An RNA of 177 nucleotides, treated with DMS and 2A3 and read out base by base. The 2A3 profile rests on 5,246 reads. For DMS the reverse transcriptase was MarathonRT. It was measured as part of the RMDB library M2PK50. The reactions ran in a buffer of 150 mM KOAc, 10 mM MgCl2 and 150 mM bicine (pH 8.5), at 24 C. Reactivities are rounded to 0.1 and cut off at 0 and 3. 2A3 adducts were read by reverse transcription with SuperScript II with manganese.
RNA sequence: GGGAACGACUCGAGUAGAGUCGAAAAUGGACGUUGUUCGCAACGUCCACAUACUGAGACGUACGUUAAACGUUUCGCGGGCAAAAGUGCAGUUAGAAUAAGUACCUAUUGAGUUCGCUCAAUAGAAGUGCCAAUAUAGUUUCGACUAUAUUGGCACAAAAGAAACAACAACAACAAC
Reactivity to DMS in 0.01 (KOAc 150mM, MgCl2 10mM, bicine 150mM(pH8.5), 24C), signal-to-noise 4, nucleotides 027 to 126: u000g010g010a010c000g040u000u000g010u000u000c130g040c020a020a000c010g010u000c000c010a000c100a080u010a120c080u010g010a040g010a020c020g010u010a060c190g010u010u010a080a140a040c020g010u000u000u000c020g010c100g010g010g010c070a040a050a080a120g010u000g010c030a050g000u000u010a080g000a070a100u000a050a070g010u000a070c130c000u000a010u000u000g000a020g010u000u000c210g020c010u000c000a010a000u000a010g010a070a110
Reactivity to 2A3 in 0.01 (KOAc 150mM, MgCl2 10mM, bicine 150mM(pH8.5), 24C), signal-to-noise 4, nucleotides 027 to 126: u060g000g000a000c000g000u000u010g000u050u070c180g010c080a000a000c010g000u000c000c010a000c000a010u050a010c000u080g020a000g000a020c020g020u060a000c040g060u090u220a150a250a000c010g000u020u020u070c040g010c030g010g050g000c040a080a070a050a050g070u080g000c020a040g030u090u130a070g070a160a080u120a220a000g060u050a060c000c010u000a010u000u010g000a000g010u030u090c220g020c070u000c000a000a000u010a010g030a080a020